[RMDB]
RNA sequence: GGGAACGACUCGAGUAGAGUCGAAAAGAUAUGGAUAAGGCACGGAGGUAUAAGCGUGAUAUCGGAAACGAUAUACGCUUGCGAACGUGCUUAUCCUAAGUCAAAACCGCUGCGUUCGCGCAGCGGAGAACUGUCAAAAGUUCGCUUUUGACAGUUCAAAAGAAACAACAACAACAAC
Reactivity to 2A3 in 0.01 (KOAc 150mM, MgCl2 10mM, bicine 150mM(pH8.5), 24C), signal-to-noise 4, nucleotides 027 to 126: g010a000u020a010u050g020g000a000u040a040a090g300g070c000a000c000g040g050a070g160g280u300a300u110a300a020g000c020g000u100g300a040u010a010u000c000g000g010a010a000a010c010g000a000u000a010u000a010c010g010c000u010u020g040c150g040a070a000c010g000u000g000c010u010u000a000u000c000c000u010a010a000g010u000c010a020a000a110a240c000c000g010c000u000g000c010g040u020u070c220g030c010g000c260a000g000c010g000g000a000
Reactivity to DMS in 0.01 (KOAc 150mM, MgCl2 10mM, bicine 150mM(pH8.5), 24C), signal-to-noise 3, nucleotides 027 to 126: g010a020u000a140u000g000g010a020u000a000a030g000g020c000a010c000g010g030a220g020g030u010a070u000a020a010g020c000g020u000g010a020u000a010u000c000g020g000a050a020a090c000g020a020u000a010u010a020c000g000c000u000u000g020c130g000a060a240c030g020u000g000c020u000u000a000u000c000c000u010a010a100g000u010c010a110a080a180a220c010c010g000c010u000g020c000g020u010u010c300g030c020g010c010a020g010c000g020g010a030